[RMDB]
RNA sequence: GGGAACGACUCGAGUAGAGUCGAAAAGAUAUGGACGUCAAUUGGGCCGAAGCGCCAGGGCGACCGUAUGUCGGAAACGACAUACAAACCCUGGAACUACGCUUCGGCCCAAUGACGUCCUAAGUCACAAUAGGUCUUUGUUCGCAAAGACCUAUUGAAAAGAAACAACAACAACAAC
Reactivity to DMS in 0.01 (KOAc 150mM, MgCl2 10mM, bicine 150mM(pH8.5), 24C), signal-to-noise 3, nucleotides 027 to 126: g020a060u010a300u010g000g020a010c000g000u010c010a070a110u000u000g020g000g000c000c000g020a020a000g010c000g010c020c000a000g010g010g010c000g010a300c300c280g000u000a000u000g000u000c000g000g000a180a110a220c000g000a020c010a010u000a000c010a060a200a110c000c000c000u000g000g000a080a040c150u020a300c020g000c000u000u000c000g010g000c000c000c000a000a000u000g000a000c000g020u000c000c000u000a020a040g010u000c020a190